Chemical mapping of a 177-nucleotide RNA with 2A3 and DMS. The RNA was probed in 150 mM KOAc, 10 mM MgCl2 and 150 mM bicine (pH 8.5) at 24 C. 2A3 adducts were read by reverse transcription with SuperScript II with manganese. The 2A3 profile rests on 22,661 reads.
[RMDB]
RNA sequence: GGGAACGACUCGAGUAGAGUCGAAAACAACAGCGUAAUCGCGUCUUGACGUGAUCUAGUUAGCAAUGACUGUAUGCUAACUCAAUUGUCUGUCAUAGACAAUACGCUGUUCUACAGUCAUUGAUACGAUAUUGUGGAAUUUCGAUUUUACAAUAUCAAAAGAAACAACAACAACAAC
Reactivity to 2A3 in 0.01 (KOAc 150mM, MgCl2 10mM, bicine 150mM(pH8.5), 24C), signal-to-noise 9, nucleotides 027 to 126: c020a000a000c000a000g000c000g000u000a000a000u010c000g000c000g000u000c030u060u200g120a010c000g010u000g000a000u000c010u010a000g000u000u000a000g000c000a020a080u100g000a000c000u000g000u010a010u010g000c000u000a000a000c000u000c010a010a030u000u000g000u000c000u000g140u050c020a030u070a020g000a000c000a000a000u020a000c000g000c000u000g000u000u000c000u000a000c000a000g000u000c000a040u050u300g130a090u100a100c080
Reactivity to DMS in 0.01 (KOAc 150mM, MgCl2 10mM, bicine 150mM(pH8.5), 24C), signal-to-noise 3, nucleotides 027 to 126: c070a010a030c030a000g000c000g030u000a080a020u000c000g000c040g000u010c050u040u020g020a040c000g020u000g000a000u000c300u000a040g010u000u000a000g010c010a030a270u010g010a010c000u000g010u000a040u000g000c000u000a000a000c000u010c070a080a030u000u010g010u000c000u010g010u020c280a120u040a020g000a040c010a000a010u010a010c010g010c020u000g000u000u000c300u000a030c000a000g000u000c000a300u030u020g000a300u060a300c300